[RMDB]
RNA sequence: GGGAACGACUCGAGUAGAGUCGAAAAUUCAGCGCAUUCGUGCGCUGAAAAGCUGUACAACGCAUGUACAGAUAACAAAACAAAAACAAAACAAAAAGCGUAGCAGGGUUCUUUUCGAAGAACCCAACUAUGUUAUGCGAUUCGUCGCAUAACAUAGAAAAGAAACAACAACAACAAC
Reactivity to DMS in 0.01 (KOAc 150mM, MgCl2 10mM, bicine 150mM(pH8.5), 24C), signal-to-noise 2, nucleotides 027 to 126: u000u000c000a000g000c000g030c000a030u000u000c140g040u000g020c000g060c000u010g000a000a010a060a110g030c020u000g000u000a010c010a040a060c090g010c100a130u000g020u010a010c000a000g030a040u030a090a130c170a070a040a110a090c160a100a060a050a070a080c130a070a050a060a070c100a010a140a100a050a130g000c000g000u020a140g030c190a070g010g000g000u000u000c000u010u000u020u000c210g000a020a010g000a000a000c020c000c020a030a050
Reactivity to 2A3 in 0.01 (KOAc 150mM, MgCl2 10mM, bicine 150mM(pH8.5), 24C), signal-to-noise 4, nucleotides 027 to 126: u020u000c000a000g000c010g010c010a010u030u050c180g130u030g010c000g000c010u010g000a000a000a000a010g000c000u000g000u020a010c010a060a010c040g010c110a110u040g000u000a000c020a000g010a020u120a030a050c090a020a130a010a010c050a020a150a070a010a030c070a040a210a030a010c030a020a160a050a070a010g050c060g060u090a040g060c140a120g000g010g000u000u000c010u010u030u060u160c170g040a020a000g000a000a000c010c000c000a000a000

This 177-nucleotide RNA was probed chemically with DMS and 2A3. The RNA was probed in 150 mM KOAc, 10 mM MgCl2 and 150 mM bicine (pH 8.5) at 24 C. For DMS the reverse transcriptase was MarathonRT. The data come from the RNA Mapping Database (RMDB), library M2PK50. Values cover nucleotides 27 to 126.